[RMDB]
RNA sequence: GGGAACGACUCGAGUAGAGUCGAAAAGCAUACGUUCCUACUCAUGGCUUGAUCGAGAUUCUUGGAUGGGAAAGCAUGCCCAUCCGAAACGUACGGUGCCCAUCCGAAACGUACGAUGACUGGAUGGGAAAGCAUGCGGAUGGGAAAGCAUGCUAGGCCGUGUACGUCUUUUCGAAGACGUACACGGAAAAGAAACAACAACAACAAC
Reactivity to 2A3 in 0.01 (KOAc 150mM, MgCl2 10mM, bicine 150mM(pH8.5), 24C), signal-to-noise 2, nucleotides 027 to 156: g040c030a050u050a090c030g050u020u000c010c000u000a050c020u050c020a020u060g140g050c050u060u130g040a060u120c080g020a070g110a280u180u050c060u120u150g030g000a040u020g010g010g030a190a210a000g150c070a020u300g070c030c000c000a000u000c000c000g000a000a010a000c010g000u130a060c070g000g100u090g040c000c000c020a000u010c000c000g000a180a070a060c080g040u140a070c060g070a060u180g100a070c070u110g020g020a000u010g010g000g000a030a040a010g000c010a020u000g010c020g050g050a110u030g080g000g080a040a040a000g000c000a000u000g000c020u030a040g080g090

The record gives the reactivity of an RNA of 207 nucleotides to 2A3. The data come from the RNA Mapping Database (RMDB), library OK3TST. The RNA was probed in 150 mM KOAc, 10 mM MgCl2 and 150 mM bicine (pH 8.5) at 24 C. 2A3 adducts were read by reverse transcription with SuperScript II with manganese.